[RMDB]
RNA sequence: GGGAACGACUCGAGUAGAGUCGAAAACAGGAAACUGGUUAAUCGUUUUCCUUGGUAGUAUAGCGGAAACCAUAAAUAAGAAGAACUCUAAGUGCUUGAGUUGAGUUAAAAUAAUUAGACAGGCAAUUAAGGUACUCCACGUUCGCGUGGAGUACAACAGAUAGGUGUGGUUCGCCACACCUAUCUGAAAAGAAACAACAACAACAAC
Reactivity to 2A3 in 0.01 (KOAc 150mM, MgCl2 10mM, bicine 150mM(pH8.5), 24C), signal-to-noise 4, nucleotides 027 to 156: c040a020g020g030a020a040a020c060u080g060g010u150u200a110a070u160c020g000u000u020u030u060c020c010u000u050g080g000u020a070g010u030a090u100a100g040c060g010g010a050a040a050c020c020a050u120a110a110a030u140a090a020g090a040a010g020a060a020c000u000c010u030a090a050g060u030g090c010u020u040g020a040g030u020u020g020a020g020u070u110a030a030a050a060u160a050a040u090u030a010g020a040c020a020g040g000c000a030a020u100u130a170a040g060g000u000a000c000u000c000c000a000c000g000u020u040c170g020c010g090u000g000g000a000g020u000a000c000a000a000
Reactivity to DMS in 0.01 (KOAc 150mM, MgCl2 10mM, bicine 150mM(pH8.5), 24C), signal-to-noise 2, nucleotides 027 to 156: c010a070g000g010a060a070a100c040u000g020g010u000u000a140a070u000c070g010u000u000u010u000c010c040u000u010g030g000u010a070g030u000a150u000a060g000c010g000g000a040a080a060c040c050a080u000a020a050a190u000a080a110g000a090a090g010a020a040c000u000c030u000a070a130g030u010g000c040u010u000g020a050g020u000u000g010a150g010u000u000a040a060a060a110u000a050a120u000u010a140g000a150c060a060g020g010c000a060a070u000u000a100a060g030g030u000a050c000u000c000c010a030c020g030u000u000c300g000c030g020u000g000g000a020g030u020a000c010a010a150